[RMDB]
RNA sequence: GGGAACGACUCGAGUAGAGUCGAAAAAUAGGUGCGGCAUAAUCGGCAACGAGCGCCUCGAUUUCGGCAUCGCGGAUAAUGGGCACACCGCCCCCGCGCGCUUGAGCCGAGGCAGGAAAAGCGCCUAGUAUCCGAAAAUGUUCGCAUUUUCGGAUACAAAAGAAACAACAACAACAAC
Reactivity to 2A3 in 0.01 (KOAc 150mM, MgCl2 10mM, bicine 150mM(pH8.5), 24C), signal-to-noise 2, nucleotides 027 to 126: a020u090a020g020g010u000g030c010g030g060c070a070u100a220a100u170c050g050g000c050a060a050c050g010a030g070c040g020c000c000u000c010g010a020u030u080u050c000g000g020c030a070u160c040g010c040g010g030a040u070a230a160u300g060g000g000c020a060c020a050c110c090g020c000c010c000c000c000g000c000g030c010g000c020u140u300g010a000g000c000c000g000a000g000g000c010a020g000g080a000a130a020a040g000c000g020c020c000u000a000
Reactivity to DMS in 0.01 (KOAc 150mM, MgCl2 10mM, bicine 150mM(pH8.5), 24C), signal-to-noise 3, nucleotides 027 to 126: a190u000a020g000g040u010g010c010g020g010c150a080u010a070a130u000c040g010g010c150a110a100c050g010a080g010c160g010c000c020u000c020g010a030u010u000u000c070g010g000c010a090u000c010g030c000g000g000a140u000a100a110u010g010g000g000c010a120c190a100c300c250g000c000c010c020c000c010g020c000g030c300g000c000u010u010g030a100g000c090c000g000a010g000g010c020a100g000g010a050a090a100a180g000c020g000c010c000u000a020
An RNA of 177 nucleotides, treated with 2A3 and DMS and read out base by base. Conditions: 150 mM KOAc, 10 mM MgCl2 and 150 mM bicine (pH 8.5), 24 C. In probing experiments dimethyl sulfate is read out at A N1 and C N3, which are open when not base-paired.